[RMDB]
RNA sequence: GGGAACGACUCGAGUAGAGUCGAAAAGACCGUGGGUUCGCCCACGGUCAAAUCCCACGAUGCGGCGCAUCGAGCCAACAAUCCGUCGGUCGGUCCGAACAAAAAGAGCGGUGUUCGCACCGCUCAAGAUGUGAAAUAGGUUCGCCUAUUUCACAUCAAAAGAAACAACAACAACAAC
Reactivity to DMS in 0.01 (KOAc 150mM, MgCl2 10mM, bicine 150mM(pH8.5), 24C), signal-to-noise 5, nucleotides 027 to 126: g000a010c000c000g040u000g010g020g020u000u010c210g020c000c010c000a010c020g000g020u000c010a000a040a100u000c010c000c000a140c090g010a040u000g010c030g010g000c080g010c080a040u010c030g000a110g000c060c070a040a090c100a110a090u010c080c050g020u010c010g010g010u000c030g010g010u000c030c030g000a080a090c180a060a060a070a100a100g000a010g010c010g010g010u000g020u000u010c180g010c010a000c000c000g010c000u000c000a010a030
Reactivity to 2A3 in 0.01 (KOAc 150mM, MgCl2 10mM, bicine 150mM(pH8.5), 24C), signal-to-noise 3, nucleotides 027 to 126: g000a000c000c000g000u010g010g010g020u040u110c190g120c040c000c000a000c000g020g010u000c000a000a000a000u000c000c010c000a000c020g010a020u150g040c110g060g040c030g030c100a050u030c080g040a030g060c020c020a050a080c010a040a150u040c050c050g030u010c010g020g010u020c020g010g010u020c020c050g050a080a030c040a040a100a020a030a010g010a000g000c000g020g000u000g000u010u020c090g000c050a000c000c000g000c000u000c000a000a000